Chemical mapping of a 207-nucleotide RNA with 2A3. The data come from the RNA Mapping Database (RMDB), library OK3TST. The 2A3 profile rests on 982 reads.

RNA sequence: GGGAACGACUCGAGUAGAGUCGAAAACAGGAUCUCAUUUACUUUCUUCUCCAUUGUCACAAUUUUUACAUCCUUCUGCCUGUGAAAGCCUAUCUGCCUCACAUCCACGUCAGCUGUUUUCUUCAGGUUAGACCGUGGAGUAUUUACCACAUUAACAGGACUAAUCACGAUUCGUCGUGAUUAGUCCAAAAGAAACAACAACAACAAC
Reactivity to 2A3 in 0.01 (KOAc 150mM, MgCl2 10mM, bicine 150mM(pH8.5), 24C), signal-to-noise 2, nucleotides 027 to 156: c050a000g050g050a110u070c020u000c030a090u130u120u110a100c090u000u080u030c050u170u030c070u000c010c020a060u030u100g020u080c010a010c050a110a100u010u100u030u050u190a100c080a060u020c020c000u000u080c010u050g020c000c000u100g000u010g030a060a040a040g000c000c000u070a100u020c050u070g000c020c000u000c000a030c000a080u000c000c030a040c010g000u000c000a000g030c010u000g130u070u090u090u080c070u080u030c000a020g070g000u060u040a050g030a010c060c060g000u020g000g000a030g000u010a060u020u090u090a020c000c050a050c070a070u250u300a110a000c030a140